Structure probing data (2A3 and DMS) for a 177-nucleotide construct. For DMS the reverse transcriptase was MarathonRT. Reactivities are given for positions 27 through 126. The data come from the RNA Mapping Database (RMDB), library OK1LIB.
RNA sequence: GGGAACGACUCGAGUAGAGUCGAAAAGGUGGCUCUUAGAGACGAACUCCACAACGUGUGUCAGAGUCACCGAUUUAGCAUGUUCGUCCUACUAUGCUCGUGCAUACGAUGUAGGACGUUCAUGCGAGGGAACGAUUACCUUCGGGUAGUCGUUCCCAAAAGAAACAACAACAACAAC
Reactivity to 2A3 in 0.01 (KOAc 150mM, MgCl2 10mM, bicine 150mM(pH8.5), 24C), signal-to-noise 9, nucleotides 027 to 126: g000g000u000g000g000c000u000c010u050u100a050g020a010g020a100c010g040a110a080c060u090c090c040a070c060a090a090c050g020u100g020u030g090u060c020a000g000a000g010u000c000a000c000c000g000a000u000u010u030a000g000c000a000u000g000u000u000c000g000u000c000c000u000a000c000u010a000u050g030c020u070c260g220u300g060c030a020u050a120c070g190a070u130g000u000a000g000g000a000c000g000u000u000c000a000u000g000c000g000a100
Reactivity to DMS in 0.01 (KOAc 150mM, MgCl2 10mM, bicine 150mM(pH8.5), 24C), signal-to-noise 6, nucleotides 027 to 126: g010g010u000g000g000c000u010c000u010u010a130g000a090g000a030c030g000a050a070c090u020c100c090a090c110a120a080c030g000u000g010u020g000u010c100a030g000a010g000u000c010a010c000c000g010a020u030u020u030a130g000c000a000u000g000u000u000c000g010u000c000c000u000a010c010u010a040u010g000c060u020c250g020u050g010c050a020u030a080c300g020a110u040g030u000a000g000g010a000c010g010u010u000c010a000u000g000c000g000a100